Chemical mapping of a 207-nucleotide RNA with 2A3. For 2A3, 822 sequencing reads were counted. The reactions ran in a buffer of 150 mM KOAc, 10 mM MgCl2 and 150 mM bicine (pH 8.5), at 24 C.

RNA sequence: GGGAACGACUCGAGUAGAGUCGAAAACCAUAGGUUCGCCUAUGGAAAAAAGCGUACUACCAUCUGCCUGUGACAUGAUCCGCUCCCAAAUAGGAGCGUGAUCAACAGCACAGGAACUACAGAUGGUAUCGCAAAAACGGGCACUUCGGUGCCCGAAGUAAGUUCCUCAGUUCGCUGAGGAACUUACAAAAGAAACAACAACAACAAC
Reactivity to 2A3 in 0.01 (KOAc 150mM, MgCl2 10mM, bicine 150mM(pH8.5), 24C), signal-to-noise 2, nucleotides 027 to 156: c000c000a010u000a000g040g050u030u010c260g110c040c040u050a050u080g020g030a170a030a000a000a060a000g040c050g030u120a070c080u000a000c000c000a000u010c000u000g010c000c000u020g000u070g080a200c000a180u050g000a000u000c000c000g000c020u080c010c020c030a300a300a010u300a150g000g020a000g010c000g000u070g000a000u020c000a000a020c070a000g000c030a000c000a000g020g040a030a010c130u300a040c010a040g010a000u000g000g000u000a000u050c000g000c030a040a040a040a040a040c020g000g000g000c080a000c000u060u000c270g230g000u000g050c000c030c000g000a010a000